Structure probing data (DMS and 2A3) for a 177-nucleotide construct. 2A3 adducts were read by reverse transcription with SuperScript II with manganese. It was measured as part of the RMDB library M2PK50. Values cover nucleotides 27 to 126.
RNA sequence: GGGAACGACUCGAGUAGAGUCGAAAACUGAGACGCUUCGGCGUCUCAGAAAUGGAACACAGGCGAAGGAAGCAAGAGCUAUCUUGCCAAUGACCACGUGGAAAACUCAUACGUUCGCGUAUGAGAAGUAUUUAGAUAACUUCGGUUAUCUAAAUACAAAAGAAACAACAACAACAAC
Reactivity to DMS in 0.01 (KOAc 150mM, MgCl2 10mM, bicine 150mM(pH8.5), 24C), signal-to-noise 8, nucleotides 027 to 126: c000u000g000a000g010a030c010g020c000u000u010c200g030g010c000g020u000c000u000c000a000g000a020a070a060u010g010g020a140a110c020a030c040a110g000g010c040g010a170a040g010g010a160a200g000c010a020a020g000a060g010c210u010a060u000c000u010u000g010c010c030a090a140u000g000a160c200c010a070c130g010u000g010g000a070a060a100a140c010u000c000a000u000a000c000g010u000u010c230g010c000g020u000a000u000g000a000g000a030a080
Reactivity to 2A3 in 0.01 (KOAc 150mM, MgCl2 10mM, bicine 150mM(pH8.5), 24C), signal-to-noise 7, nucleotides 027 to 126: c000u000g000a000g010a010c000g030c030u040u070c200g150g000c000g010u000c000u000c000a000g000a000a000a010u100g020g040a100a000c020a000c030a050g030g030c070g110a090a040g040g010a020a030g030c020a040a030g030a020g020c060u090a100u210c010u020u020g000c000c020a010a030u060g060a100c010c000a050c120g020u060g040g040a050a070a030a050c010u000c000a000u000a010c010g030u020u060c300g010c010g090u000a000u000g000a000g000a010a010
For DMS the reverse transcriptase was MarathonRT.